[RMDB]
RNA sequence: GGGAACGACUCGAGUAGAGUCGAAAACGAGGCUAUUACCAUGAAAGUAUCAGUUCCAGGCAUGCCGGUUACACUUUUAAAUAUGAGCAAGAACGAUAUUUAUAAGAUGGUGAGCGGGGACAAGAUGCCCAUAAACAGGUUUCGACCUGUUUAUGGGAAAAGAAACAACAACAACAAC
Reactivity to DMS in 0.01 (KOAc 150mM, MgCl2 10mM, bicine 150mM(pH8.5), 24C), signal-to-noise 3, nucleotides 027 to 126: c100g010a080g010g030c020u010a040u000u010a090c040c020a080u000g010a110a080a100g010u000a040u000c080a140g010u010u000c020c070a090g020g010c060a050u000g000c020c030g000g010u000u010a060c150a100c030u000u000u000u010a020a070a060u000a070u000g000a080g010c080a070a110g010a040a090c100g000a040u000a020u000u000u000a030u010a060a060g020a090u000g020g010u000g000a050g030c090g020g010g000g000a060c100a080a050g000a090u000g010
Reactivity to 2A3 in 0.01 (KOAc 150mM, MgCl2 10mM, bicine 150mM(pH8.5), 24C), signal-to-noise 3, nucleotides 027 to 126: c030g010a020g050g000c040u060a040u120u140a120c000c020a030u110g140a050a110a020g040u060a040u060c050a040g000u020u030c030c020a020g050g070c050a040u060g050c000c000g040g000u060u070a070c090a010c020u020u120u010u130a030a050a040u130a100u100g040a080g070c060a100a070g050a110a000c050g010a000u000a010u070u030u010a080u030a050a050g010a060u060g000g000u030g000a000g020c040g010g010g010g010a020c000a030a010g030a080u100g050